This 177-nucleotide RNA was probed chemically with DMS and 2A3. The RNA was probed in 150 mM KOAc, 10 mM MgCl2 and 150 mM bicine (pH 8.5) at 24 C. The DMS profile rests on 6,178 reads. 2A3 adducts were read by reverse transcription with SuperScript II with manganese. Source: RMDB library OK2TRN, as collected in RNAgym.
RNA sequence: GGGAACGACUCGAGUAGAGUCGAAAACAAUUGGAAAUAAACAAAACUCACUCAAUUGCCUUGCAAUAGUUCGAAAGCAAGUCCAGUCCACUCCGAGCCACUUGGAUCUUGGAGCAGUUUGCAAGUCUAUGGACGUAUUAUUCGUAAUACGUCCAUAAAAAGAAACAACAACAACAAC
Reactivity to DMS in 0.01 (KOAc 150mM, MgCl2 10mM, bicine 150mM(pH8.5), 24C), signal-to-noise 6, nucleotides 027 to 126: c050a060a070u010u010g010g010a080a110a090u020a090a110a150c120a060a070a080a090c130u010c090a090c090u010c020a050a060u000u000g010c160c020u000u000g010c030a040a060u010a110g010u000u000c100g000a070a110a110g010c080a030a020g000u000c030c020a060g010u000c060c060a080c060u000c060c050g010a080g010c050c060a120c160u000u000g030g000a060u010c040u000u000g000g010a040g010c070a050g010u000u000u000g010c050a030a040g000u010c100
Reactivity to 2A3 in 0.01 (KOAc 150mM, MgCl2 10mM, bicine 150mM(pH8.5), 24C), signal-to-noise 3, nucleotides 027 to 126: c020a020a060u080u080g010g040a050a120a090u180a110a140a050c070a030a110a030a030c040u040c080a060c030u080c030a040a140u090u070g040c010c010u020u010g000c020a000a070u020a120g100u060u050c040g080a140a040a000g040c020a040a000g020u000c010c010a020g040u000c020c010a080c040u030c050c060g030a040g020c030c010a070c050u070u090g020g010a070u100c010u030u020g010g020a010g010c000a020g040u060u070u040g020c010a020a020g040u000c010